[RMDB]
RNA sequence: GGGAACGACUCGAGUAGAGUCGAAAAGAUAUGGAUGACCGAGCUCUUGGAUUUAAGGCAUACAGCUAACAUAUCGGAAACGAUAUGGGAGCUGUAUGCCUUUGUCAGAGCGAGGUCAUCCUAAGUCCUGUUUUAAGAUCUUCGGAUCUUAAAACAGAAAAGAAACAACAACAACAAC
Reactivity to DMS in 0.01 (KOAc 150mM, MgCl2 10mM, bicine 150mM(pH8.5), 24C), signal-to-noise 2, nucleotides 027 to 126: g020a120u010a260u000g000g000a000u000g000a020c000c000g000a300g000c000u010c000u010u000g040g020a010u000u020u000a010a010g020g020c000a000u000a000c000a010g010c010u000a010a020c000a010u000a010u010c010g010g000a190a120a300c000g010a010u000a000u000g000g000g010a010g000c000u000g020u000a000u000g000c000c010u000u000u000g010u010c000a020g010a000g010c010g000a270g000g000u000c010a000u020c000c000u000a020a110g010u000c050
An RNA of 177 nucleotides, treated with DMS and read out base by base.